[RMDB]
RNA sequence: GGGAACGACUCGAGUAGAGUCGAAAAGAAAAGAGCCUGAAAUCGGCCGGGGAUAGUGAGCAGUGGCUCGAAAGGUAAUCCCGGCAAAGGAAAGUGCUGAGAGGCGCGAGUACGAGCCGGGACAUGCUGCAUACAUGUCUUUCGAGACAUGUAUGCAAAAAGAAACAACAACAACAAC
Reactivity to 2A3 in 0.01 (KOAc 150mM, MgCl2 10mM, bicine 150mM(pH8.5), 24C), signal-to-noise 2, nucleotides 027 to 126: g080a000a140a000a000g060a000g010c000c040u110g100a060a050a060u080c040g000g030c020c010g000g050g040g000a100u120a070g100u060g050a040g050c030a050g090u140g080g000c030u030c040g010a060a040a000g120g000u120a050a010u040c000c000c000g000g000c020a120a050a000g000g000a020a000a010g030u020g000c010u040g010a020g040a050g110g020c000g000c010g010a000g000u000a000c000g000a000g020c000c000g000g000g000a000c000a000u080g010c000
Reactivity to DMS in 0.01 (KOAc 150mM, MgCl2 10mM, bicine 150mM(pH8.5), 24C), signal-to-noise 3, nucleotides 027 to 126: g020a190a050a150a100g000a130g010c030c000u000g000a030a090a100u020c110g000g040c020c060g000g000g010g020a060u020a080g030u020g000a080g000c040a090g000u020g010g000c040u010c080g010a040a060a060g000g010u020a120a230u000c000c020c000g050g000c000a010a020a160g020g020a120a110a150g000u000g010c000u020g000a300g000a160g000g000c020g000c020g010a050g000u000a140c000g000a300g020c000c000g010g000g000a020c070a000u000g000c120
Chemical mapping of a 177-nucleotide RNA with 2A3 and DMS.
For DMS the reverse transcriptase was MarathonRT.
2A3 adducts were read by reverse transcription with SuperScript II with manganese.
The data come from the RNA Mapping Database (RMDB), libraries RFM100 and RFMREP.
Values cover nucleotides 27 to 126.
Conditions: 150 mM KOAc, 10 mM MgCl2 and 150 mM bicine (pH 8.5), 24 C.